[RMDB]
RNA sequence: GGGAACGACUCGAGUAGAGUCGAAAACAGCCAAAUCCUUAAUUUGAAAGGAUGCAGUUCACAGACUAACUGAAGGCGGGUCCUUCUCUUCAAUGGGAAGGCCUAAAUUAUAGUCGAUCUACCCUGUCACCAGGGAUAGAAAAAUGUUGUACACACCGUUGUUAUAAGGCUUCGGCCUUAUAACAACAAAAGAAACAACAACAACAAC
Reactivity to 2A3 in 0.01 (KOAc 150mM, MgCl2 10mM, bicine 150mM(pH8.5), 24C), signal-to-noise 2, nucleotides 027 to 156: c020a020g000c000c010a110a100a000u040c010c020u180u110a170a290u210u240u280g200a180a080a020g000g000a000u060g000c020a000g010u070u030c110a070c020a130g020a000c000u020a020a000c000u030g110a070a060g040g000c060g030g000g010u110c010c000u010u000c000u020c000u210u220c110a070a210u190g010g000g050a020a010g000g010c010c000u020a020a010a000u240u160a080u010a010g010u010c010g000a000u000c000u000a020c000c010c000u030g100u170c020a060c150c040a090g060g000g040a090u040a020g040a050a050a000a000a000u080g000u000u000g020u060a020c070a000c030a000c100c130
Record summary: Chemical mapping of a 207-nucleotide RNA with 2A3. The 2A3 profile rests on 766 reads. For 2A3 the reverse transcriptase was SuperScript II with manganese.